[RMDB]
RNA sequence: GGGAACGACUCGAGUAGAGUCGAAAAUAGUCAUGAUCGUACUCUCAGUACGCGAUCGUGAGUACCAUGCUCAUGGUACUGAUCCAUGUGAUCUCAUGCUAGCUAGACUGCACUAGCUAGGUACGUCGCACAUGCGUGAGUUCGCUCACGCAUGUGCAAAAGAAACAACAACAACAAC
Reactivity to 2A3 in 0.01 (KOAc 150mM, MgCl2 10mM, bicine 150mM(pH8.5), 24C), signal-to-noise 3, nucleotides 027 to 126: u140a000g070u000c010a030u000g000a010u030c020g030u020a030c010u050c010u050c100a030g020u070a020c120g000c030g020a020u020c000g000u010g010a000g000u030a020c010c040a010u090g090c060u160c180a030u020g000g030u000a000c020u040g020a020u020c020c060a200u190g110u180g080a090u020c010u010c030a060u180g110c010u000a000g000c000u000a010g000a140c110u250g060c170a090c100u010a000g000c010u000a000g080g000u050a030c070g080u050c080
Reactivity to DMS in 0.01 (KOAc 150mM, MgCl2 10mM, bicine 150mM(pH8.5), 24C), signal-to-noise 3, nucleotides 027 to 126: u000a110g010u000c030a000u000g020a040u000c000g000u000a070c110u010c180u000c170a080g050u000a050c040g010c060g010a010u010c010g030u000g000a060g010u000a030c020c040a060u000g020c200u010c190a060u000g010g020u010a020c030u000g010a030u000c020c030a120u000g010u000g000a050u000c030u000c070a120u000g030c000u000a010g000c000u000a000g040a130c110u000g000c200a210c000u000a010g000c010u000a000g000g000u010a050c130g000u000c090
Chemical mapping of a 177-nucleotide RNA with 2A3 and DMS. For 2A3, 3,206 sequencing reads were counted. The reactions ran in a buffer of 150 mM KOAc, 10 mM MgCl2 and 150 mM bicine (pH 8.5), at 24 C. DMS adducts were read by reverse transcription with MarathonRT. Values cover nucleotides 27 to 126. 2A3 adducts were read by reverse transcription with SuperScript II with manganese.